[RMDB]
An RNA of 177 nucleotides, treated with 2A3 and DMS and read out base by base.
The data come from the RNA Mapping Database (RMDB), library OK1LIB.
Values cover nucleotides 27 to 126.
DMS adducts were read by reverse transcription with MarathonRT.
2A3 adducts were read by reverse transcription with SuperScript II with manganese.
The RNA was probed in 150 mM KOAc, 10 mM MgCl2 and 150 mM bicine (pH 8.5) at 24 C.
RNA sequence: GGGAACGACUCGAGUAGAGUCGAAAAAGUGGUACAACUAGGUGCGCGUGGCGUAUCGGACAUGAAUGCGCGUCCUGGCAGAGGAUCACAGGAUAUGCUGUCCGCAGUGCAGCGUCAUGUCUGUGAGGGCGCGGUGGUGCUUCGGCAUCGUUGCGCCAAAAGAAACAACAACAACAAC
Reactivity to 2A3 in 0.01 (KOAc 150mM, MgCl2 10mM, bicine 150mM(pH8.5), 24C), signal-to-noise 8, nucleotides 027 to 126: a000g100u080g030g030u090a040c020a090a030c050u050a030g020g000u050g030c030g010c030g050u050g050g010c020g010u040a050u050c020g010g020a010c010a030u100g070a140a040u120g010c020g000c010g020u030c000c000u000g020g010c050a020g050a060g080g030a040u040c010a000c000a020g010g020a020u030a010u050g000c000u010g020u020c010c050g030c040a030g020u040g030c010a000g000c010g000u010c020a000u020g010u000c000u000g020u010g030a050g010
Reactivity to DMS in 0.01 (KOAc 150mM, MgCl2 10mM, bicine 150mM(pH8.5), 24C), signal-to-noise 9, nucleotides 027 to 126: a060g020u010g000g020u010a040c080a120a120c060u010a040g010g010u010g000c030g000c030g020u000g010g000c050g010u010a040u020c100g000g010a070c060a030u010g000a060a070u010g010c020g000c020g010u010c010c000u000g000g020c090a100g000a100g010g000a110u010c040a020c020a030g010g000a030u010a040u020g000c020u000g000u020c050c080g010c140a080g010u020g000c030a030g010c010g010u010c080a030u010g000u010c010u000g010u000g000a050g000